[RMDB]
RNA sequence: GGGAACGACUCGAGUAGAGUCGAAAAAAUGCGGUAUUUCAAUCCUCUGGUGCUAGUCGUAGCUGCAAAGGCAAGGUCUCUUAAACUGGACUGAGUGCAUCAAGGUAGCAAAGUGAAGAGCCCCUGACGGUCUAAGAGAGUUCGCUCUCUUAGACCGAAAAGAAACAACAACAACAAC
Reactivity to DMS in 0.01 (KOAc 150mM, MgCl2 10mM, bicine 150mM(pH8.5), 24C), signal-to-noise 1, nucleotides 027 to 126: a030a000u000g000c030g000g010u020a110u020u000u000c070a160a140u010c060c000u010c100u000g000g010u000g020c010u000a020g020u000c060g030u010a140g000c030u000g010c140a100a050a100g010g000c030a060a120g010g010u020c000u000c110u000u010a080a110a040c250u010g000g000a080c040u010g010a100g010u020g020c070a030u010c060a080a080g000g000u000a070g000c050a040a060a070g000u000g010a120a090g030a170g020c140c010c010c010u050g000a190
The data come from the RNA Mapping Database (RMDB), library OK2TRN. An RNA of 177 nucleotides, treated with DMS and read out base by base. Conditions: 150 mM KOAc, 10 mM MgCl2 and 150 mM bicine (pH 8.5), 24 C. The DMS profile rests on 787 reads. Reactivities are given for positions 27 through 126.